This 177-nucleotide RNA was probed chemically with DMS and 2A3. Values cover nucleotides 27 to 126. For DMS, 817 sequencing reads were counted. Conditions: 150 mM KOAc, 10 mM MgCl2 and 150 mM bicine (pH 8.5), 24 C. It was measured as part of the RMDB library OK2TST.

RNA sequence: GGGAACGACUCGAGUAGAGUCGAAAAGAUGUGGUCACCAAUCCACUGUCAACCAGCGACCCCACCCUGAUCGGAAGCAUGUUCUGGGUGUUCAACAAUAUCAUUGCCGUACUUGCUAUCGUCUGGUUGCGCGUAAGAUAUUCGUAUCUUACGCGCAAAAAGAAACAACAACAACAAC
Reactivity to DMS in 0.01 (KOAc 150mM, MgCl2 10mM, bicine 150mM(pH8.5), 24C), signal-to-noise 1, nucleotides 027 to 126: g010a050u000g010u010g010g000u010c240a100c150c220a160a130u000c010c040a000c050u020g010u020c000a040a090c050c000a080g000c050g000a060c040c020c010c020a080c000c000c020u020g000a010u000c060g050g010a030a100g040c110a050u000g020u000u000c050u000g040g010g020u020g020u000u000c040a020a160c090a040a080u010a020u000c040a050u000u000g020c070c040g010u000a010c040u010u000g000c030u000a080u000c080g010u010c020u000g000g000u000
Reactivity to 2A3 in 0.01 (KOAc 150mM, MgCl2 10mM, bicine 150mM(pH8.5), 24C), signal-to-noise 2, nucleotides 027 to 126: g100a060u110g020u010g010g000u020c040a030c080c020a040a060u070c010c000a030c020u050g080u080c010a020a010c000c010a000g000c010g030a040c000c000c000c000a010c000c040c010u030g020a070u050c020g030g050a080a000g090c050a020u120g000u000u020c030u050g050g030g000u050g010u070u060c060a070a050c010a110a050u070a050u200c080a090u000u120g040c020c020g080u050a060c020u050u090g000c020u030a050u150c020g100u000c030u010g000g000u010